[RMDB]
RNA sequence: GGGAACGACUCGAGUAGAGUCGAAAAGGGGUCUAGCGGGAGACACAUUUAGGCUUGGAUUUAUAUGGCUGAAGCCUCCACGGCCAUAUUGUCAGCCUACCAUGUCUUUGAUCGCUAGACGGAGGCACCCAAAUCCGAGACGUUCGCGUCUCGGAAACUUAAUAAUUAGGUUCGCCUAAUUAUUAAGAAAAGAAACAACAACAACAAC
Reactivity to 2A3 in 0.01 (KOAc 150mM, MgCl2 10mM, bicine 150mM(pH8.5), 24C), signal-to-noise 4, nucleotides 027 to 156: g050g000g000g020u010c010u000a000g010c010g000g060g000a020g020a010c040a010c030a140u090u100u060a010g000g010c030u070u240g190g000a040u130u300u100a040u070a000u000g000g000c000u020g060a120a010g020c000c010u000c010c000a030c010g000g000c000c010a000u010a010u010u070g090u060c080a010g010c000c000u020a030c070c080a110u090g020u020c010u260u270u050g050a050u040c000g000c000u000a000g010a000c010g000g000a000g010g010c030a040c010c000c000a050a130a020u000c010c000g000a000g000a000c010g010u100u110c290g040c010g100u030c000u000c000g000g000a000a000a000
Reactivity to DMS in 0.01 (KOAc 150mM, MgCl2 10mM, bicine 150mM(pH8.5), 24C), signal-to-noise 1, nucleotides 027 to 156: g000g040g010g050u000c010u000a000g020c010g000g000g000a060g000a030c020a070c120a210u000u000u000a040g020g010c000u000u020g030g010a110u000u000u000a000u030a060u000g020g000c010u000g000a010a150g020c020c010u010c000c000a300c100g010g000c000c010a040u000a000u000u000g000u000c020a080g020c010c010u000a010c250c230a060u000g000u000c000u010u010u000g000a100u000c000g000c010u000a020g020a020c000g000g030a020g160g050c000a130c010c000c030a030a110a200u000c010c000g020a030g000a000c000g000u000u000c300g030c040g050u000c010u000c000g000g000a000a010a030